[RMDB]
RNA sequence: GGGAACGACUCGAGUAGAGUCGAAAAAUGGGGCCACCAAGAGAGUACAUUCAACCCUAAUAAGGAGAUGUCUCAGUUUAUCAGUUUUCUGUCAAUCAUUAAAACAAGAAAAAUGAAACUUGCAAUUAUAUCGUGUCUUGUUCGCAAGACACGAUAUAAAAGAAACAACAACAACAAC
Reactivity to DMS in 0.01 (KOAc 150mM, MgCl2 10mM, bicine 150mM(pH8.5), 24C), signal-to-noise 1, nucleotides 027 to 126: a010u000g000g000g000g040c000c000a020c070c000a140a090g020a070g000a020g000u030a000c010a010u010u020c160a050a030c060c000c030u040a070a100u010a180a300g010g030a190g000a040u020g000u020c000u000c030a140g000u000u000u010a130u030c040a070g000u000u000u000u000c000u010g000u000c180a120a020u030c290a050u090u060a070a020a190a150c030a110a000g000a000a000a040a090a020u010g000a020a060a060c060u000u000g000c090a100a020u020u040
Reactivity to 2A3 in 0.01 (KOAc 150mM, MgCl2 10mM, bicine 150mM(pH8.5), 24C), signal-to-noise 4, nucleotides 027 to 126: a010u040g000g000g010g060c020c010a020c030c000a150a000g080a000g000a000g060u120a000c000a010u020u090c020a130a270c020c000c000u100a120a100u130a110a010g020g000a010g010a030u010g020u000c010u000c010a010g030u050u070u130a100u090c010a000g000u000u010u020u020c030u000g080u050c040a030a080u050c010a080u070u140a150a100a030a030c130a140a160g020a010a030a020a000a000u090g010a060a020a000c030u050u140g060c020a030a110u090u000